The record gives the reactivity of an RNA of 207 nucleotides to 2A3 and DMS. Conditions: 150 mM KOAc, 10 mM MgCl2 and 150 mM bicine (pH 8.5), 24 C.

RNA sequence: GGGAACGACUCGAGUAGAGUCGAAAACCAGAGCAGCCCCAGUGUUUCCACGGAGGAUGUCCAGGAGCUCCUCUGGGGGACACCUCCCUGGGGGACAACCAGGGAUGUUCUGGGAUGUUCUCUGAAGAUUAAGGGUGUGUCCCGUGGUCACUAGGGAACUAUUACCCUGCUUCGGCAGGGUAAUAGUAAAAGAAACAACAACAACAAC
Reactivity to 2A3 in 0.01 (KOAc 150mM, MgCl2 10mM, bicine 150mM(pH8.5), 24C), signal-to-noise 2, nucleotides 027 to 156: c010c010a000g000a010g050c030a010g020c010c010c010c000a030g000u010g010u020u160u040c030c010a060c010g020g010a000g000g030a140u110g010u020c030c040a060g050g080a090g090c060u030c050c020u000c000u020g120g000g100g020g000a010c010a010c000c000u040c010c010c040u010g030g000g020g010g020a020c040a040a040c010c010a010g050g000g000a100u050g030u120u050c020u020g000g000g010a040u170g030u070u010c010u010c010u020g110a150a100g010a200u040u190a120a050g020g030g000u090g000u040g030u100c000c020c020g020u040g020g050u040c040a040c060u050a060g050g000g000a020
Reactivity to DMS in 0.01 (KOAc 150mM, MgCl2 10mM, bicine 150mM(pH8.5), 24C), signal-to-noise 1, nucleotides 027 to 156: c010c000a090g010a100g030c000a090g000c030c010c010c060a090g030u000g030u000u000u020c000c040a200c060g030g010a020g020g030a030u000g000u010c020c020a300g030g010a200g030c060u000c000c030u000c040u000g000g000g000g020g010a030c010a020c020c090u000c000c020c000u000g010g000g010g030g010a050c020a040a190c000c020a100g010g010g020a150u000g030u000u010c000u000g000g000g030a100u000g020u000u000c010u000c010u000g000a140a120g010a090u000u010a080a090g010g030g020u000g000u020g010u000c000c000c010g020u000g030g000u010c020a100c030u010a130g000g060g000a100